[RMDB]
RNA sequence: GGGAACGACUCGAGUAGAGUCGAAAAGAUAUGGAACGAAUCCAGGAACUACGAGUUACCUAUCGGAAACGAUAGAACUCGCCUGGACUAUUCCUAAGUCAAACGAUUAGGCUUCGGCCUAAUCGAACACUUGUAUCAACUUCGGUUGAUACAAGUGAAAAGAAACAACAACAACAAC
Reactivity to 2A3 in 0.01 (KOAc 150mM, MgCl2 10mM, bicine 150mM(pH8.5), 24C), signal-to-noise 4, nucleotides 027 to 126: g020a010u140a040u220g020g000a040a030c060g070a150a200u000c010c010a000g050g000a110a100c140u260a070c300g000a000g000u030u060a150c020c010u010a000u010c000g020g030a080a070a030c010g020a000u010a020g030a010a000c000u000c010g020c030c000u000g000g000a010c010u030a040u000u000c010c000u030a160a020g070u050c110a140a050a090c020g000a000u000u010a010g000g000c010u040u080c300g130g000c000c000u000a000a000u010c000g010a030a000
Reactivity to DMS in 0.01 (KOAc 150mM, MgCl2 10mM, bicine 150mM(pH8.5), 24C), signal-to-noise 2, nucleotides 027 to 126: g000a040u000a300u010g010g000a000a010c080g010a070a130u000c000c000a000g010g000a110a050c120u020a300c030g010a020g000u000u000a090c300c010u000a000u000c000g010g010a060a110a130c000g010a020u000a000g010a030a000c000u000c000g000c010c010u000g000g000a020c060u000a210u000u000c000c000u000a060a090g000u010c020a110a100a250c020g000a010u000u000a010g000g000c000u000u010c240g030g000c000c000u000a000a000u000c000g000a050a110